Record summary:
Source: RMDB library RFM100, as collected in RNAgym. An RNA of 177 nucleotides, treated with 2A3 and read out base by base. The 2A3 profile rests on 298 reads. Reactivities are given for positions 27 through 126. The reactions ran in a buffer of 150 mM KOAc, 10 mM MgCl2 and 150 mM bicine (pH 8.5), at 24 C.
[RMDB]
RNA sequence: GGGAACGACUCGAGUAGAGUCGAAAAUCAAAAGAGAGCUUUGUAGAGGCAUUCUUUUUGACUACUUUUCUCUAGCGUGCCAUUUUAGUUUUUGACGGAGAUUCGAAUGAACUUAAGUUUAUGAUGACGUGCGAGAUAGAUUCGUCUAUCUCGCACGAAAAGAAACAACAACAACAAC
Reactivity to 2A3 in 0.01 (KOAc 150mM, MgCl2 10mM, bicine 150mM(pH8.5), 24C), signal-to-noise 1, nucleotides 027 to 126: u050c010a000a010a000a000g070a000g020a000g000c000u060u210u260g190u300a040g080a040g150g000c000a060u040u020c000u080u000u030u060u050g010a030c000u050a050c010u010u000u110u090c000u030c000u000a000g070c000g030u000g050c000c000a090u200u000u000u000a000g040u000u000u000u000u170g030a070c070g130g000a100g030a040u160u070c000g060a030a020u150g000a090a090c040u000u080a070a000g140u180u080u000a200u160g110a080u080g000a040